[RMDB]
RNA sequence: GGGAACGACUCGAGUAGAGUCGAAAAUCGAGGUCACAGAGCCUGAGAACCUGGGACCCCUUAGUUUUAAGCCUGGACAGUCAUGGCACACACGCCUGUAGGAGGAGGCGGAGCUCCAGGCAGCUCCCUUUAGAGACAACUUCGGUUGUCUCUAAAGAAAAGAAACAACAACAACAAC
Reactivity to DMS in 0.01 (KOAc 150mM, MgCl2 10mM, bicine 150mM(pH8.5), 24C), signal-to-noise 4, nucleotides 027 to 126: u010c110g000a080g000g010u010c010a040c030a030g010a190g020c030c020u010g030a240g010a120a270c020c020u000g000g010g000a040c010c000c010c030u010u010a090g010u010u000u000u000a100a170g000c010c010u000g000g000a060c070a100g000u010c060a090u000g010g020c060a080c120a110c100a170c040g000c020c020u010g030u000a090g010g020a120g010g000a050g000g000c030g000g010a120g020c120u000c010c010a010g000g020c020a050g000c100u000c000c050
Reactivity to 2A3 in 0.01 (KOAc 150mM, MgCl2 10mM, bicine 150mM(pH8.5), 24C), signal-to-noise 2, nucleotides 027 to 126: u120c030g010a010g040g010u020c010a030c010a080g030a080g070c030c000u070g020a070g010a060a020c000c000u000g030g000g020a010c010c000c000c040u060u130a050g110u090u040u050u280a090a010g010c000c000u000g010g020a020c010a040g050u070c030a140u120g090g020c020a010c000a010c000a020c060g010c010c000u050g040u100a060g020g140a040g020g070a010g000g050c050g000g020a020g010c040u010c000c000a030g000g000c010a010g000c010u040c020c010